Overview
The record gives the reactivity of an RNA of 177 nucleotides to 2A3 and DMS.

RNA sequence: GGGAACGACUCGAGUAGAGUCGAAAAGAUAUGGACAAUUUGGCUUGUCAGAUUCUCUGAUGAUGCAUUCGGAAACGAAUGACCCAUCGGACGAGAAUCUUGGAUUUAGCCAAAUUGUCCUAAGUCACCUAUGAGAAAGGUUCGCCUUUCUCAUAGGAAAAGAAACAACAACAACAAC
Reactivity to 2A3 in 0.01 (KOAc 150mM, MgCl2 10mM, bicine 150mM(pH8.5), 24C), signal-to-noise 3, nucleotides 027 to 126: g040a030u100a050u190g010g000a000c000a010a020u020u000u010g020g000c010u010u040g010u030c010a000g000a030u010u000c010u010c000u020g020a030u010g000a000u010g020c010a020u000u010c000g070g030a080a080a100c020g000a010a020u030g080a160c110c040c030a010u000c000g000g020a010c000g000a010g000a000a000u000c000u000u080g040g010a010u300u300u250a000g000c000c000a000a000a000u000u000g000u000c000c000u000a010a000g000u000c000a020
Reactivity to DMS in 0.01 (KOAc 150mM, MgCl2 10mM, bicine 150mM(pH8.5), 24C), signal-to-noise 6, nucleotides 027 to 126: g010a050u000a300u010g010g000a020c000a000a000u010u000u000g000g000c000u000u000g010u000c010a030g010a020u000u010c000u000c000u010g000a300u010g000a020u000g010c000a020u010u000c010g020g000a150a120a300c000g010a010a010u000g000a190c300c300c070a000u010c000g010g010a300c300g000a020g010a000a000u000c010u000u010g000g020a030u000u000u000a010g000c000c000a000a010a000u000u010g010u000c000c010u000a000a100g000u000c030a250
2A3 adducts were read by reverse transcription with SuperScript II with manganese. DMS (dimethyl sulfate) methylates the pairing face of unpaired adenines and cytosines.